The record gives the reactivity of an RNA of 177 nucleotides to 2A3 and DMS. Reactivities are given for positions 27 through 126. The reactions ran in a buffer of 150 mM KOAc, 10 mM MgCl2 and 150 mM bicine (pH 8.5), at 24 C.
[RMDB]
RNA sequence: GGGAACGACUCGAGUAGAGUCGAAAAAGGUGAACAGCCUCUGGUUAAUAGAAUAAUGUAGAUAAGGGAAGUCGGCAAAAUAGAUCCGUAACUUAGGGAAAAGGAUUGGCUCAUAGGGCAGGGUUUGCUAAACUGUUAACUUCGGUUAACAGUUUAGAAAAGAAACAACAACAACAAC
Reactivity to 2A3 in 0.01 (KOAc 150mM, MgCl2 10mM, bicine 150mM(pH8.5), 24C), signal-to-noise 2, nucleotides 027 to 126: a000g040g010u040g010a080a000c010a000g000c000c000u000c010u040g060g000u100u090a110a060u070a170g090a140a080u140a110a040u150g040u070a040g040a100u070a100a040g020g020g010a030a000g040u040c020g000g020c060a060a050a050a020u080a030g050a050u050c010c000g020u010a020a060c010u020u070a040g050g000g000a020a040a000a040g040g000a060u060u070g040g000c020u000c050a050u070a050g020g020g030c030a020g030g000g030u040u060u030g010
Reactivity to DMS in 0.01 (KOAc 150mM, MgCl2 10mM, bicine 150mM(pH8.5), 24C), signal-to-noise 4, nucleotides 027 to 126: a040g000g030u010g000a050a100c130a120g000c020c030u000c040u010g010g010u000u010a070a100u000a080g000a090a060u000a080a060u000g000u000a060g000a060u000a060a100g010g000g000a060a060g010u000c090g010g010c090a020a040a090a070u020a090g000a060u000c020c030g010u000a090a090c100u000u000a050g020g010g020a030a040a080a100g000g000a070u010u000g010g010c060u000c040a070u010a090g020g010g010c080a060g010g010g000u000u000u010g000